RNA sequence: GGGAACGACUCGAGUAGAGUCGAAAAGCGCCUGGAACCAUUCGUGCGCCUGAGUGCCCAUCGGCGUCAGCGCCAGGCGACGCGCGAGAUCAUAGUUGCUGGUGCCGACGAACCAUGACUCCUGCUGGCUGAGUACUCCAUUCGUGGAGUACUCAGCAAAAGAAACAACAACAACAAC
Reactivity to 2A3 in 0.01 (KOAc 150mM, MgCl2 10mM, bicine 150mM(pH8.5), 24C), signal-to-noise 4, nucleotides 027 to 126: g050c000g000c000c020u010g040g070a070a060c020c010a130u080u070c070g040u060g030c020g000c010c020u060g060a060g010u100g050c030c000c010a010u050c040g040g010c010g030u000c020a020g020c000g070c040c000a050g050g070c000g000a040c030g040c000g000c070g030a050g020a100u150c050a080u100a140g050u080u110g030c020u010g030g030u050g010c050c010g010a030c040g020a030a050c000c010a050u070g010a020c060u050c020c030u080g070c020u060g060
Reactivity to DMS in 0.01 (KOAc 150mM, MgCl2 10mM, bicine 150mM(pH8.5), 24C), signal-to-noise 1, nucleotides 027 to 126: g000c040g030c000c000u000g010g020a090a100c070c090a250u070u000c090g000u020g000c120g030c050c000u000g000a080g000u000g020c030c000c000a180u000c100g020g000c090g000u040c050a070g000c050g000c000c000a000g060g000c000g000a030c010g000c100g010c190g000a080g030a160u010c130a170u000a120g000u000u000g010c000u000g050g050u040g100c020c020g010a070c090g050a130a100c010c020a110u000g040a050c030u000c000c000u040g000c000u000g000

Conditions: 150 mM KOAc, 10 mM MgCl2 and 150 mM bicine (pH 8.5), 24 C. An RNA of 177 nucleotides, treated with 2A3 and DMS and read out base by base. The DMS profile rests on 1,062 reads. For DMS the reverse transcriptase was MarathonRT. Values cover nucleotides 27 to 126.